[RMDB]
Conditions: 150 mM KOAc, 10 mM MgCl2 and 150 mM bicine (pH 8.5), 24 C.
The record gives the reactivity of an RNA of 177 nucleotides to DMS.
RNA sequence: GGGAACGACUCGAGUAGAGUCGAAAAAGAUUGGGACACUAUCCCUCCUGUUGAAAAAUCUUAUCAUGUGGGUAGGAUCUUGGGUUUUCUUUAUGGUGACCUAAAGAGUCAAAAUUCCAGUCGUGCAAUGCCUAACUCCUUUCGAGGAGUUAGGCAUAAAAGAAACAACAACAACAAC
Reactivity to DMS in 0.01 (KOAc 150mM, MgCl2 10mM, bicine 150mM(pH8.5), 24C), signal-to-noise 1, nucleotides 027 to 126: a050g000a030u000u000g000g000g000a040c090a200c070u000a020u000c010c010c020u000c050c030u010g000u000u020g000a000a060a120a150a130u010c110u010u000a060u000c030a050u030g010u000g010g010g000u000a030g010g000a060u000c010u020u010g000g010g010u000u000u010u000c010u010u000u020a090u010g010g020u000g000a010c010c010u000a010a030a080g010a020g020u020c110a030a050a080a210u010u000c010c000a030g000u000c000g010u010g010c130a090